RNA sequence: GGGAACGACUCGAGUAGAGUCGAAAACAACAGAGUAAGACCCUGCGCGUUAAGUGCCGCAUCAACGGGGAGUUGUGCUGCGGACGAAGGUAUUAGCCGCGGUGCAGGGUCUGCAUCCCUCUGCUGAAAAAGACGGCAGCCUUCGGGCUGCCGUCAACAGCAUAGAUAUCUUCGGAUAUCUAUGCUGAAAAGAAACAACAACAACAAC
Reactivity to 2A3 in 0.01 (KOAc 150mM, MgCl2 10mM, bicine 150mM(pH8.5), 24C), signal-to-noise 1, nucleotides 027 to 156: c050a000a000c000a000g030a000g050u090a070a000g030a010c000c000c000u000g000c000g000c000g030u020u070a090a040g040u040g160c000c000g000c000a010u160c030a070a050c050g050g080g090g030a080g010u060u180g040u040g010c060u020g000c000g030g010a010c010g020a070a050g010g010u070a120u200u170a270g040c000c000g000c060g000g050u080g010c000a000g000g000g000u000c000u000g030c000a090u030c030c010c000u030c000u030g090c020u080g030a090a050a010a030a030g000a000c000g000g090c000a000g020c020c030u080u110c180g050g020g000c000u000g070c010c080g010u010c040a000a000
Notes
Chemical mapping of a 207-nucleotide RNA with 2A3. The data come from the RNA Mapping Database (RMDB), library M2RFPK. 2A3 adducts were read by reverse transcription with SuperScript II with manganese. Values are in units of 0.01, from 0 to 300, in steps of 10. The reactions ran in a buffer of 150 mM KOAc, 10 mM MgCl2 and 150 mM bicine (pH 8.5), at 24 C.